Structure probing data (2A3 and DMS) for a 177-nucleotide construct.
The DMS profile rests on 44,327 reads.
DMS adducts were read by reverse transcription with MarathonRT.
The reactions ran in a buffer of 150 mM KOAc, 10 mM MgCl2 and 150 mM bicine (pH 8.5), at 24 C.
[RMDB]
RNA sequence: GGGAACGACUCGAGUAGAGUCGAAAAUCUUGUAAUGCUUGCGCAAGUUGUGCUUUAGCUUGUUCAAUUUCUUCUUUAGUCAGCGCAUUGUUAAUGUCGUUAUGACCUUGUUGAAGUAUUUGAUUAAAACGUAAAACUAAUUCGUUAGUUUUACGUUAAAAGAAACAACAACAACAAC
Reactivity to 2A3 in 0.01 (KOAc 150mM, MgCl2 10mM, bicine 150mM(pH8.5), 24C), signal-to-noise 4, nucleotides 027 to 126: u010c020u010u060g110u180a100a050u170g030c020u060u050g030c040g000c040a140a210g030u090u040g060u110g010c010u100u120u110a020g010c010u040u050g040u050u020c020a040a040u090u020u090c010u030u010c000u060u280u100a020g000u010c010a000g000c020g020c020a010u000u060g230u180u220a090a030u050g130u180c010g010u040u120a110u130g010a010c010c020u070u180g090u080u050g040a000a010g010u040a140u060u040u040g040a050u150u240a060a180
Reactivity to DMS in 0.01 (KOAc 150mM, MgCl2 10mM, bicine 150mM(pH8.5), 24C), signal-to-noise 9, nucleotides 027 to 126: u000c040u000u010g010u010a100a080u010g010c060u000u000g010c070g010c040a070a120g010u010u000g030u000g010c060u000u000u000a060g010c040u000u000g010u010u000c030a030a050u000u000u000c020u000u000c020u000u010u010a070g010u000c010a030g010c010g010c010a020u000u000g010u000u010a040a040u000g000u010c020g020u000u010a120u000g010a030c020c180u000u000g010u000u000g000a020a080g010u000a060u000u000u000g000a050u010u010a060a060